[RMDB]
RNA sequence: GGGAACGACUCGAGUAGAGUCGAAAAAAAAGGGCAAAACCCCAAACUUUACGCGAACGAACUAUCCACAGUGCACCCUCGAUUUCCGUCGACACGUGCAAACGGCCAGACCUCGACGGUGCUAGCCCGUUCUGAUCGUCUUCGGACGAUCAGAACGAAAAGAAACAACAACAACAAC
Reactivity to 2A3 in 0.01 (KOAc 150mM, MgCl2 10mM, bicine 150mM(pH8.5), 24C), signal-to-noise 2, nucleotides 027 to 126: a000a000a000a000g070g010g000c140a060a050a010a030c020c000c040c010a010a010a010c050u040u150u120a100c060g000c020g030a040a030c000g040a040a000c050u040a080u100c050c020a060c090a080g000u010g020c010a080c000c030c000u040c010g010a050u000u130u030c000c030g000u000c010g000a010c040a040c170g030u030g030c000a070a080a020c010g050g000c030c040a100g000a110c000c040u060c010g040a040c000g000g000u000g020c020u020a030g000c000c010
Reactivity to DMS in 0.01 (KOAc 150mM, MgCl2 10mM, bicine 150mM(pH8.5), 24C), signal-to-noise 1, nucleotides 027 to 126: a010a000a090a030g000g000g000c010a030a140a030a180c040c000c000c070a150a040a060c200u080u000u030a080c060g000c000g000a020a070c180g030a050a010c060u000a080u030c050c010a050c130a090g000u000g000c000a000c000c130c060u000c100g000a060u040u000u000c250c050g020u000c000g000a000c260a030c010g000u010g000c090a050a080a040c050g030g000c020c030a210g000a180c210c000u000c000g030a150c150g000g030u000g000c000u000a080g000c030c040
Structure probing data (2A3 and DMS) for a 177-nucleotide construct.
Conditions: 150 mM KOAc, 10 mM MgCl2 and 150 mM bicine (pH 8.5), 24 C.
The data come from the RNA Mapping Database (RMDB), library OK1LIB.